[RMDB]
RNA sequence: GGGAACGACUCGAGUAGAGUCGAAAAUAAAUAAGGGAAACCAUGAUGAGCGUCACCCAAUGCGGGUACCCAUGCCUCCGGGGUGGUGAUUAAAAAUGAGAGUGUUACCAGCGGCGUGGUAAAUGCCCAAUACGCAGCUGUUCGCAGCUGCGUAUUGAAAAGAAACAACAACAACAAC
Reactivity to DMS in 0.01 (KOAc 150mM, MgCl2 10mM, bicine 150mM(pH8.5), 24C), signal-to-noise 2, nucleotides 027 to 126: u010a060a130a080u020a120a110g020g030g000a150a090a160c040c020a090u010g010a140u020g000a110g010c030g010u000c040a060c010c030c010a080a050u010g040c150g000g000g020u000a020c110c040c120a060u000g000c030c030u000c150c060g010g000g000g040u000g020g000u000g000a090u010u000a010a010a070a100a050u000g010a110g010a060g010u000g000u000u000a100c010c020a110g000c070g000g010c050g020u000g020g000u010a050a050a050u000g000c020c030